Record summary
Chemical mapping of a 177-nucleotide RNA with 2A3 and DMS. For 2A3 the reverse transcriptase was SuperScript II with manganese. The data come from the RNA Mapping Database (RMDB), library TTRINS. The RNA was probed in 150 mM KOAc, 10 mM MgCl2 and 150 mM bicine (pH 8.5) at 24 C.

RNA sequence: GGGAACGACUCGAGUAGAGUCGAAAAGAUAUGGAAAUUACAUUCGCAGAUAGGGACUUAUGCUACCCACCUUACUCGGAAACGAGUAAGAGGCAUAAGUCCCUGUAGAAUUAAAUUUCCUAAGUCACCUAACCAUAUCGUUCGCGAUAUGGUUAGGAAAAGAAACAACAACAACAAC
Reactivity to 2A3 in 0.01 (KOAc 150mM, MgCl2 10mM, bicine 150mM(pH8.5), 24C), signal-to-noise 1, nucleotides 027 to 126: g020a020u080a000u210g000g000a020a000a030u000u040a020c040a060u000u000c050g030c280a060g100a300u190a050g040g000g010a000c000u010u000a010u010g030c030u070a270c010c120c050a030c020c000u020u000a000c010u020c010g040g020a080a090a060c010g000a000g000u000a000a000g000a030g000g000c000a000u000a000a000g000u010c000c000c000u000g010u040a000g010a000a000u000u030a050a040a110u010u000u040c000c020u000a190a030g060u060c030a030
Reactivity to DMS in 0.01 (KOAc 150mM, MgCl2 10mM, bicine 150mM(pH8.5), 24C), signal-to-noise 2, nucleotides 027 to 126: g020a060u010a300u000g000g000a020a010a010u000u010a240c300a040u000u000c000g010c180a150g010a210u010a020g010g000g010a010c010u000u010a000u000g010c020u000a070c020c060c110a300c130c000u000u010a000c000u000c000g010g010a060a090a120c020g010a000g010u000a000a020g000a050g000g000c000a000u010a020a000g000u000c000c000c000u000g010u000a030g010a020a010u000u000a110a110a080u000u000u010c000c000u000a080a100g000u000c000a270